[RMDB]
An RNA of 207 nucleotides, treated with 2A3 and DMS and read out base by base. The RNA was probed in 150 mM KOAc, 10 mM MgCl2 and 150 mM bicine (pH 8.5) at 24 C. For DMS, 2,498 sequencing reads were counted. For 2A3 the reverse transcriptase was SuperScript II with manganese.
RNA sequence: GGGAACGACUCGAGUAGAGUCGAAAACAGAAUUGACUAUAACGUUGAACAGUCCUGUAUCAAAACUGAAGAUGGUUUGAAACAGCUUCACAAGGACUUCUCCCACGUGGAAGGCCUUCUUUCUCAAUCUCUUCGCCUGUGGAAGUCCUAUUACAUAAUCAUCAGGGUGAUUCGUCACCCUGAUGAUAAAAGAAACAACAACAACAAC
Reactivity to 2A3 in 0.01 (KOAc 150mM, MgCl2 10mM, bicine 150mM(pH8.5), 24C), signal-to-noise 1, nucleotides 027 to 156: c000a030g160a220a100u170u070g010a030c020u080a050u170a300a020c110g080u030u190g120a090a030c030a080g080u060c000c000u020g010u000a060u060c000a080a000a000a000c060u200g020a040a000g020a080u090g050g120u070u080u220g090a090a070a050c000a020g080c000u090u070c050a030c020a080a040g000g020a010c000u060u000c040u000c010c020c020a010c080g010u060g000g060a020a000g100g040c000c000u140u080c050u020u210u000c080u010c030a090a280u000c070u000c000u100u100c010g060c040c050u090g020u010g060g000a040a010g000u000c010c000u020a050u010u130a020c030a070u130a000
Reactivity to DMS in 0.01 (KOAc 150mM, MgCl2 10mM, bicine 150mM(pH8.5), 24C), signal-to-noise 1, nucleotides 027 to 156: c040a070g000a120a080u020u000g000a080c090u000a090u000a120a130c080g020u000u000g020a200a110c040a070g000u010c030c030u010g000u000a100u000c060a040a080a120a150c060u010g020a040a040g000a010u010g000g000u010u010u020g020a110a130a100c020a030g000c050u000u020c020a030c120a090a070g020g020a040c000u000u000c020u000c070c020c070a140c130g030u010g000g010a040a020g000g010c020c010u000u000c020u010u000u010c110u000c070a080a110u000c040u000c040u000u000c020g010c000c000u000g000u010g000g000a050a070g010u000c010c010u000a060u000u000a060c120a090u010a080